This 177-nucleotide RNA was probed chemically with 2A3 and DMS. 2A3 is a SHAPE reagent: it acylates the 2'-hydroxyl of flexible nucleotides of all four kinds. 2A3 adducts were read by reverse transcription with SuperScript II with manganese. The RNA was probed in 150 mM KOAc, 10 mM MgCl2 and 150 mM bicine (pH 8.5) at 24 C. It was measured as part of the RMDB library OK2TST.

RNA sequence: GGGAACGACUCGAGUAGAGUCGAAAAUGCGCCGGAGAUGACCUACCGUUCUGGGACCCUCCGAAACUGGUGAACGGAACCAUGCGGGCCGACAAUGUGGUCGAUAUAAUGGAGCUAGCCUGCAUGGGAUAAACCGUAGGUUCGCCUACGGUUUAUCAAAAGAAACAACAACAACAAC
Reactivity to 2A3 in 0.01 (KOAc 150mM, MgCl2 10mM, bicine 150mM(pH8.5), 24C), signal-to-noise 4, nucleotides 027 to 126: u110g000c080g030c020c020g010g010a030g000a020u090g180a080c000c010u040a090c010c020g030u040u040c030u040g010g010g050a030c020c000c020u010c000c020g060a090a070a040c100u160g100g010u140g130a000a000c000g010g010a000a020c000c000a000u000g000c000g000g020g000c030c020g020a030c030a090a130u300g080u120g200g060u040c010g020a010u040a020u030a180a150u170g080g000a030g050c060u040a010g000c020c000u000g000c020a010u010g010g000
Reactivity to DMS in 0.01 (KOAc 150mM, MgCl2 10mM, bicine 150mM(pH8.5), 24C), signal-to-noise 6, nucleotides 027 to 126: u000g010c070g040c100c020g010g000a070g010a110u000g020a280c030c010u000a110c020c020g000u010u000c040u010g000g010g000a270c270c070c010u000c020c010g000a040a090a070c150u000g010g010u000g010a040a040c040g000g010a230a300c010c000a000u000g000c010g000g010g030c010c030g000a020c060a090a130u020g010u010g030g020u000c030g000a070u010a100u010a080a110u010g010g010a160g010c070u000a080g010c000c000u000g010c000a000u000g000g000